[RMDB]
RNA sequence: GGGAACGACUCGAGUAGAGUCGAAAAAUAAAGAGCGUACAUCUCUCUCAGACUGUACGACAGUCUGACUCUCUCGUACAAUCGCUCAACGAGACAGAGAGAGCGUUCAAAGAAGCGAGAAAAAAAAGAUCAUAUAUUUCUUCGGAAAUAUAUGAUCAAAAGAAACAACAACAACAAC
Reactivity to 2A3 in 0.01 (KOAc 150mM, MgCl2 10mM, bicine 150mM(pH8.5), 24C), signal-to-noise 2, nucleotides 027 to 126: a010u160a000a130a020g030a010g020c010g020u060a050c080a270u000c010u000c000u010c010u010c020a000g010a010c000u010g020u160a110c070g100a100c130a010g020u000c000u000g010a040c000u010c000u000c000u000c050g000u040a070c060a090a270u050c080g020c070u040c050a030a000c010g010a000g000a010c020a010g020a010g000a000g000a000g040c020g000u000u050c100a120a080a000g050a050a010g060c080g010a030g000a150a080a020a000a020a010a010a050
Reactivity to DMS in 0.01 (KOAc 150mM, MgCl2 10mM, bicine 150mM(pH8.5), 24C), signal-to-noise 2, nucleotides 027 to 126: a080u000a050a160a130g000a050g010c020g030u010a100c090a180u000c020u010c020u000c030u000c000a020g000a020c020u000g000u020a090c300g000a130c020a000g000u000c010u010g000a070c120u010c110u000c010u000c010g000u010a100c110a060a050u000c030g000c000u000c070a070a040c020g000a030g010a130c230a030g020a050g000a050g030a020g010c060g010u000u000c030a040a200a100g010a080a050g030c020g010a080g000a010a000a000a080a060a180a150a280